[RMDB]
RNA sequence: GGGAACGACUCGAGUAGAGUCGAAAAGCCGCCUCCGACGAGGAGAUACUGGCCGCAUAUCACCUGGUGGCUCGUGUCGAAGGCGUAUUCGUGGAGCCCGCGUCCGCAGCCAGCAUUGCGGGUCUCCGUUCCGAUUACUGUUCGCAGUAAUCGGAACAAAAGAAACAACAACAACAAC
Reactivity to DMS in 0.01 (KOAc 150mM, MgCl2 10mM, bicine 150mM(pH8.5), 24C), signal-to-noise 3, nucleotides 027 to 126: g020c190c020g010c010c000u000c010c000g010a060c030g010a110g020g000a070g010a070u000a020c050u010g010g020c020c080g010c070a230u000a090u020c110a140c090c050u020g020g020u000g010g000c000u000c040g030u010g010u000c000g010a040a000g000g030c020g030u000a050u000u010c080g010u020g010g000a040g010c000c000c000g010c000g010u000c110c110g020c070a100g010c060c100a120g000c040a100u000u010g040c000g000g010g000u030c010u000c010c010
Reactivity to 2A3 in 0.01 (KOAc 150mM, MgCl2 10mM, bicine 150mM(pH8.5), 24C), signal-to-noise 2, nucleotides 027 to 126: g060c020c000g010c000c000u000c000c010g040a050c020g060a090g270g000a040g010a010u040a000c020u010g050g000c050c010g090c110a080u220a090u200c090a070c030c040u030g040g000u000g040g000c000u000c030g100u050g000u030c020g010a020a010g010g070c030g020u030a140u070u170c160g030u140g020g010a000g000c000c040c000g000c000g040u110c090c130g000c030a030g140c110c030a030g020c030a050u040u300g000c000g010g010g060u040c040u000c000c010

Structure probing data (DMS and 2A3) for a 177-nucleotide construct. For 2A3 the reverse transcriptase was SuperScript II with manganese. The 2A3 profile rests on 2,217 reads. The data come from the RNA Mapping Database (RMDB), library OK2TRN. The reactions ran in a buffer of 150 mM KOAc, 10 mM MgCl2 and 150 mM bicine (pH 8.5), at 24 C. Values cover nucleotides 27 to 126.